[RMDB]
RNA sequence: GGGAACGACUCGAGUAGAGUCGAAAAGAUCCACCGUUCGCGGUGGAUCAAAAAAACCUUUGUGAUCCUGAGGCGACGAUCGUAUCAGUCCCAUUGGGACUUUUACGGGAGCCUCGGAUCACUCUGGUAAAAACUUGUGUUCUUCGGAACACAAGAAGCAGAGUACAUAGUUCGCUAUGUACUCUGCAAAAGAAACAACAACAACAAC
Reactivity to 2A3 in 0.01 (KOAc 150mM, MgCl2 10mM, bicine 150mM(pH8.5), 24C), signal-to-noise 1, nucleotides 027 to 156: g000a000u050c000c000a030c020c020g030u060u110c300g000c020g110g000u000g000g010a000u010c000a010a020a000a000a000a010a000c030c010u000u030u030g000u000g000a010u050c050c140u280g000a020g000g000c040g030a300c010g020a080u010c000g000u000a000u020c010a000g020u010c030c000c120a300u190u250g010g000g000a000c000u050u010u000u000a000c010g000g010g000a000g020c000c000u000c000g000g010a000u000c000a000c000u000c000u020g000g010u090a100a120a040a000a000c000u000u020g000u000g020u000u000c000u010u040c150g120g000a010a000c000a000c010a000a000g000a020a000